Structure probing data (DMS) for a 177-nucleotide construct. It was measured as part of the RMDB library TTRDES. DMS adducts were read by reverse transcription with MarathonRT.
[RMDB]
RNA sequence: GGGAACGACUCGAGUAGAGUCGAAAAAAAAGAUAUGGAGACUGCUACCCACCUGUAACAUCCUUUGAUCAUAAUUCGGAAACGAAUUAUGGGAGGAUGCUUACAGAGGCAGUCUCCUAAGUCAAAACUAGGUUAGAUUCUUCGGAAUCUAACCUAGAAAAGAAACAACAACAACAAC
Reactivity to DMS in 0.01 (KOAc 150mM, MgCl2 10mM, bicine 150mM(pH8.5), 24C), signal-to-noise 1, nucleotides 027 to 126: a000a020a060a010g010a040u000a100u030g000g030a030g030a030c000u000g020c010u000a140c050c050c090a300c070c000u000g020u000a040a040c000a010u000c000c000u000u000u020g030a150u010c000a010u000a020a000u000u010c000g000g000a080a030a080c000g010a040a020u000u000a000u000g000g000g030a000g030g000a000u000g010c100u000u000a000c030a040g000a090g000g000c020a000g000u000c000u000c000c000u010a020a020g000u000c070a040a140a180a080
The RNA was probed in 150 mM KOAc, 10 mM MgCl2 and 150 mM bicine (pH 8.5) at 24 C.